Chemical mapping of a 207-nucleotide RNA with DMS and 2A3. It was measured as part of the RMDB library OK3TST. For 2A3 the reverse transcriptase was SuperScript II with manganese.
RNA sequence: GGGAACGACUCGAGUAGAGUCGAAAAAGCCAUUAGCUGACGCGCGCCUGGCAUUGCUUGACGAUGCCACCAGAGCGACGUGGGACUAUUUUGACAUGUAUCUCAGAAAUGCAUUAGAUGGCAAUCCUAUCUCUGUAGAUCUAAAGCACAGGGCACCCGUCGUUCCAAAGUUCGCUUUGGAACGACGAAAAGAAACAACAACAACAAC
Reactivity to DMS in 0.01 (KOAc 150mM, MgCl2 10mM, bicine 150mM(pH8.5), 24C), signal-to-noise 1, nucleotides 027 to 156: a090g120c010c000a040u000u010a110g030c030u000g000a100c020g000c040g000c000g000c030c000u000g010g090c010a020u010u010g030c010u010u010g000a110c050g010a070u000g070c040c060a070c070c160a140g000a300g000c030g010a010c060g030u010g070g020g020a080c000u000a030u000u000u000u000g030a110c070a080u000g000u000a120u000c010u010c130a160g010a060a140a130u000g040c010a070u000u000a060g000a080u000g000g000c020a090a100u010c020c020u020a100u000c020u030c050u010g020u000a090g010a030u000c060u000a090a150a130g010c050a010c030a020g010g000g030c020a030c030c000
Reactivity to 2A3 in 0.01 (KOAc 150mM, MgCl2 10mM, bicine 150mM(pH8.5), 24C), signal-to-noise 3, nucleotides 027 to 156: a000g060c040c010a030u050u100a040g020c070u090g080a050c000g050c010g010c000g030c000c010u010g000g000c000a020u000u030g020c040u190u280g040a200c020g020a020u000g050c010c010a030c040c120a010g030a040g040c010g130a230c020g040u040g010g010g000a060c050u080a180u130u210u100u110g130a040c050a070u120g040u070a070u000c050u040c080a040g110a130a150a020u060g010c030a050u050u090a100g010a060u060g000g000c050a040a020u050c010c010u050a070u060c050u000c030u010g050u100a050g040a160u070c070u240a090a080a030g020c010a040c020a060g010g000g000c010a100c020c000